Description: This 207-nucleotide RNA was probed chemically with 2A3 and DMS. For DMS the reverse transcriptase was MarathonRT. The DMS profile rests on 5,451 reads. The reactions ran in a buffer of 150 mM KOAc, 10 mM MgCl2 and 150 mM bicine (pH 8.5), at 24 C. Source: RMDB library M2RFPK, as collected in RNAgym.

[RMDB]
RNA sequence: GGGAACGACUCGAGUAGAGUCGAAAAUCAUUGAGAUGCUGGGCGCUAUGGUCGUCCUCCUCCGGCUGACCUCCUCCUCAGCUGCUGACCGGCGCCGCACAGGCGGCAUCUCAGCUUCGUGUGCAAAAAAAGAAUGGUCGGUUCGCCGACCAUUCAAUCUAACUUGAAUGUUCGCAUUCAAGUUAGAAAAAGAAACAACAACAACAAC
Reactivity to 2A3 in 0.01 (KOAc 150mM, MgCl2 10mM, bicine 150mM(pH8.5), 24C), signal-to-noise 1, nucleotides 027 to 156: u160c020a020u020u060g000a000g010a010u010g010c000u100g010g010g000c020g010c010u060a200u300g000g000u020c010g030u080c030c030u030c020c000u030c030c000g000g000c000u000g020a050c000c080u090c020c000u030c000c020u010c100a010g000c020u010g030c080u070g000a000c020c000g000g000c000g010c000c010g000c020a020c020a030g140g050c000g020g010c010a010u020c000u000c010a010g010c000u160u180c050g120u080g050u050g070c110a000a090a000a000a000a030a120g000a000a000u000g010g000u000c010g010g030u030u050c160g030c090c000g000a000c000c000a020u010u000c000a000a000
Reactivity to DMS in 0.01 (KOAc 150mM, MgCl2 10mM, bicine 150mM(pH8.5), 24C), signal-to-noise 2, nucleotides 027 to 156: u010c070a160u020u000g020a020g000a020u000g000c000u000g020g020g020c020g010c030u020a040u020g040g020u000c020g020u010c040c040u000c040c030u010c040c000g000g010c010u000g000a010c010c040u000c120c080u010c030c050u000c010a050g000c020u010g010c060u000g010a020c020c040g000g030c040g030c000c010g030c070a070c090a100g010g050c020g010g010c000a010u000c010u010c010a060g020c090u000u000c170g010u000g010u000g020c010a000a010a080a110a100a090a150g000a020a000u000g010g020u000c000g030g010u000u000c300g030c040c000g000a020c000c000a010u010u000c000a070a140